[RMDB]
RNA sequence: GGGAACGACUCGAGUAGAGUCGAAAAGGGUAGAUCUUCGGAUCUACCCAAAAGGAGCAACCAACGAAGGAAGUGCUAGCAUAUGCGUGCAGGCUAGCACUAAAAGGUUCCGCUUCGGCGGAACCAACGAAGUUAACAUGUUCGCAUGUUAACUUCGAAAAGAAACAACAACAACAAC
Reactivity to 2A3 in 0.01 (KOAc 150mM, MgCl2 10mM, bicine 150mM(pH8.5), 24C), signal-to-noise 3, nucleotides 027 to 126: g000g000g000u020a000g000a010u000c020u020u060c170g030g000a000u000c000u000a000c000c000c000a010a000a000a010g020g000a050g020c010a030a030c010c000a010a050c080g090a070a050g160g060a060a030g000u000g000c000u000a000g000c020a070u110a060u240g050c060g070u070g050c010a000g020g010c000u000a000g010c000a010c000u000a000a010a000a020g000g000u000u000c000c000g000c010u020u030c200g080g000c000g000g000a000a000c000c000a000a000
Reactivity to DMS in 0.01 (KOAc 150mM, MgCl2 10mM, bicine 150mM(pH8.5), 24C), signal-to-noise 3, nucleotides 027 to 126: g010g010g010u000a000g010a000u000c000u000u010c220g010g000a010u000c000u000a010c000c000c000a010a000a040a050g010g020a100g010c060a070a170c040c040a050a090c150g010a120a160g000g000a110a020g020u000g000c000u000a010g000c000a050u020a130u000g010c050g010u010g020c030a100g000g000c000u000a000g000c010a000c000u000a000a030a100a080g010g000u000u000c000c000g020c000u000u000c190g020g000c010g000g010a020a000c000c010a000a040